This 177-nucleotide RNA was probed chemically with DMS and 2A3.
RNA sequence: GGGAACGACUCGAGUAGAGUCGAAAAUUUUGAGCUUUCGAGCUCAAAACAACUGGUGUCCCGACCAGGAAAAACAGAUUUACACCAAGUGAAAGAUCGAAAGGGCCACCAUGUUCGCAUGGUGGAACCACGCCUAGAAGUUCGCUUCUAGGCGUGGAAAAGAAACAACAACAACAAC
Reactivity to DMS in 0.01 (KOAc 150mM, MgCl2 10mM, bicine 150mM(pH8.5), 24C), signal-to-noise 1, nucleotides 027 to 126: u000u000u000u000g030a010g000c000u000u000u010c240g020a070g010c000u000c000a000a000a010a020c220a060a170c010u010g000g010u000g000u010c000c000c040g010a150c000c000a000g000g000a120a080a130a090a070c190a100g020a060u000u000u000a230c090a060c060c150a220a210g000u000g010a060a040a130g000a030u010c020g020a070a020a080g000g000g030c000c000a000c000c000a010u000g000u000u000c280g020c020a010u000g020g020u000g010g000a020a100
Reactivity to 2A3 in 0.01 (KOAc 150mM, MgCl2 10mM, bicine 150mM(pH8.5), 24C), signal-to-noise 2, nucleotides 027 to 126: u040u030u020u000g000a000g000c000u050u050u160c250g070a010g000c000u030c010a000a000a000a020c040a040a110c010u010g010g020u030g060u050c030c000c000g020a000c010c000a020g100g040a070a050a000a010a010c030a070g020a040u120u070u190a050c060a040c110c100a250a100g030u040g110a090a020a000g070a030u080c050g050a120a110a050g090g000g010c010c000a000c020c000a000u020g030u050u030c150g010c130a000u000g000g000u020g000g000a010a000
For DMS, 555 sequencing reads were counted. The reactions ran in a buffer of 150 mM KOAc, 10 mM MgCl2 and 150 mM bicine (pH 8.5), at 24 C.